[RMDB]
An RNA of 207 nucleotides, treated with 2A3 and DMS and read out base by base. The data come from the RNA Mapping Database (RMDB), library M2RFPK. The 2A3 profile rests on 1,164 reads.
RNA sequence: GGGAACGACUCGAGUAGAGUCGAAAAGCCUCCUCGCUUCCAUAGAAAGGGGACGGGGCAGAUAGCAAGUGCUACAACCGAGCGGUGGUAUCUGUCAAACUAAGCAGCCACUGCACAUCAAUUGACUAAACGAUGCCGAUCUUCGGAUCGGCAUCAACAUUUUAAUGUGGUUCGCCACAUUAAAAUGAAAAGAAACAACAACAACAAC
Reactivity to 2A3 in 0.01 (KOAc 150mM, MgCl2 10mM, bicine 150mM(pH8.5), 24C), signal-to-noise 3, nucleotides 027 to 156: g010c010c010u040c020c000u000c000g020c070u080u030c050c030a110u060a220g210a110a130a080g000g010g010g000a010c030g010g000g000g000c030a040g080a150u080a010g030c080a140a120g150u180g150c000u030a070c010a100a050c040c080g070a010g060c000g000g000u010g000g050u070a160u090c010u020g060u070c020a050a100a090c130u100a150a060g010c010a000g000c020c000a010c000u010g070c020a020c020a100u220c100a090a190u110u190g050a040c040u200a040a100a000c080g000a000u000g000c000c010g000a000u020c010u020u050c150g050g010a000u000c010g000g000c000a000u000c000a000a000
Reactivity to DMS in 0.01 (KOAc 150mM, MgCl2 10mM, bicine 150mM(pH8.5), 24C), signal-to-noise 2, nucleotides 027 to 156: g020c010c000u000c010c010u000c010g010c010u010u000c030c020a080u010a100g010a130a100a180g000g010g010g000a020c000g010g000g020g020c110a050g010a160u000a060g010c020a070a080g030u000g000c040u000a090c080a130a140c080c010g000a140g000c000g000g000u000g010g040u000a050u000c030u020g020u000c030a070a090a200c180u000a050a100g010c020a160g010c020c010a090c000u000g000c020a090c100a090u000c090a080a150u000u000g020a110c130u000a050a140a160c120g000a010u000g040c020c010g010a010u010c000u000u000c300g070g010a010u000c020g010g020c000a000u000c000a010a080

About this RNA
Conditions: 150 mM KOAc, 10 mM MgCl2 and 150 mM bicine (pH 8.5), 24 C.